[RMDB]
RNA sequence: GGGAACGACUCGAGUAGAGUCGAAAAAGACGGGUUAGGAUCCUCUACAGUACUGUACGGUGCUCUUAGUCACUGCCAUGUGGGACCUGGCCCCACAUAUCAUCCACACUACAGCACCAUACGGUACGUAAACUACUCCCUUCGGGGAGUAGUUUACAAAAGAAACAACAACAACAAC
Reactivity to DMS in 0.01 (KOAc 150mM, MgCl2 10mM, bicine 150mM(pH8.5), 24C), signal-to-noise 3, nucleotides 027 to 126: a080g030a050c070g020g010g000u010u020a080g010g030a050u020c020c030u000c170u080a160c210a120g000u000a030c000u010g000u000a000c090g000g030u000g020c000u000c160u020u000a020g000u000c020a030c050u010g000c300c140a030u000g000u000g000g000g020a110c080c040u000g020g020c040c000c000c000a000c000a000u020a070u030c080a120u000c200c030a090c130a000c020u000a020c300a010g010c000a010c000c000a130u000a010c000g000g000u000a000c040
Reactivity to 2A3 in 0.01 (KOAc 150mM, MgCl2 10mM, bicine 150mM(pH8.5), 24C), signal-to-noise 5, nucleotides 027 to 126: a000g090a040c090g010g000g030u060u070a060g070g070a080u060c040c010u040c030u070a100c110a070g000u000a000c000u000g000u020a010c020g000g000u010g000c000u020c030u080u120a000g000u010c020a010c050u000g040c040c010a020u010g000u000g000g000g000a060c010c050u070g100g000c020c000c020c000a000c000a000u090a010u040c090a050u080c120c000a040c010a010c060u010a000c010a010g000c000a000c000c000a010u000a010c010g000g010u000a000c000
This 177-nucleotide RNA was probed chemically with DMS and 2A3. The data come from the RNA Mapping Database (RMDB), library RFM100. High DMS reactivity at an A or C suggests that its Watson-Crick edge is free. For 2A3 the reverse transcriptase was SuperScript II with manganese.